[RMDB]
RNA sequence: GGGAACGACUCGAGUAGAGUCGAAAAGAUAUGGAUGCGAAUCGACAUGCCUCGACCUCGGAAACGAGGUCAGAGGCAACAGCGAUCCGCAUCCUAAGUCAAAUCAUCACAGUUCGCUGUGAUGAAAUCAAGACUAGAUCUUCGGAUCUAGUCUUGAAAAAGAAACAACAACAACAAC
Reactivity to 2A3 in 0.01 (KOAc 150mM, MgCl2 10mM, bicine 150mM(pH8.5), 24C), signal-to-noise 2, nucleotides 027 to 126: g010a010u010a000u050g000g000a000u000g000c010g010a000a010u000c010g030a030c160a250u300g000c020c010u020c020g000a000c000c000u000c000g000g000a020a010a010c010g010a000g000g020u000c040a010g010a010g010g000c010a010a000c020a000g000c010g000a000u010c010c010g000c010a000u030c000c000u000a000a000g000u000c010a010a030a200u070c000a010u010c000a000c000a020g030u170u190c290g060c150u000g000u000g020a000u010g010a050a010a020
Reactivity to DMS in 0.01 (KOAc 150mM, MgCl2 10mM, bicine 150mM(pH8.5), 24C), signal-to-noise 3, nucleotides 027 to 126: g000a030u000a090u010g000g000a010u010g020c000g000a020a010u010c000g040a030c090a300u010g010c010c000u010c000g000a010c010c000u000c010g040g000a030a020a050c000g000a000g010g010u000c010a010g010a010g000g030c000a000a000c180a090g020c010g000a010u000c020c000g000c000a000u000c000c000u010a010a070g000u000c010a130a160a210u000c000a000u010c000a010c000a010g000u000u010c290g020c000u000g020u000g000a000u000g000a020a050a100